The record gives the reactivity of an RNA of 177 nucleotides to DMS and 2A3.
The reactions ran in a buffer of 150 mM KOAc, 10 mM MgCl2 and 150 mM bicine (pH 8.5), at 24 C.

[RMDB]
RNA sequence: GGGAACGACUCGAGUAGAGUCGAAAAGAUAGACUCCACGGUGCCGGAGGGACUCAUCAUCACAAUCUGGUCCGCGUCGCGGAUGGUGUGCAGCCGGUGCGCAAUGACGACGAUGGUGCGCUCGGCACCCUGGAAAUUGAUUCGUCAAUUUCCAGGGAAAAGAAACAACAACAACAAC
Reactivity to DMS in 0.01 (KOAc 150mM, MgCl2 10mM, bicine 150mM(pH8.5), 24C), signal-to-noise 9, nucleotides 027 to 126: g010a120u010a100g010a130c060u000c030c040a120c110g010g010u000g020c030c030g000g010a110g010g010g010a120c070u000c070a040u000c050a070u000c020a070c120a080a100u000c040u000g020g010u000c030c030g010c030g010u000c110g010c040g010g010a040u000g000g010u000g010u000g010c120a110g020c040c040g010g010u000g020c020g010c020a080a070u000g000a100c070g010a120c140g010a080u000g010g020u000g010c050g000c030u000c010g000g010c020a070
Reactivity to 2A3 in 0.01 (KOAc 150mM, MgCl2 10mM, bicine 150mM(pH8.5), 24C), signal-to-noise 9, nucleotides 027 to 126: g050a020u160a040g060a040c030u000c010c010a030c040g050g010u060g030c030c020g050g030a050g020g010g050a050c020u010c060a050u030c000a020u030c010a030c020a100a130u030c060u120g080g010u020c020c010g000c030g110u130c080g000c020g030g010a020u050g030g050u070g020u050g050c040a030g010c030c020g040g050u140g010c010g000c010a030a110u130g040a050c090g010a010c040g030a040u120g070g050u020g000c020g000c000u010c000g000g000c010a040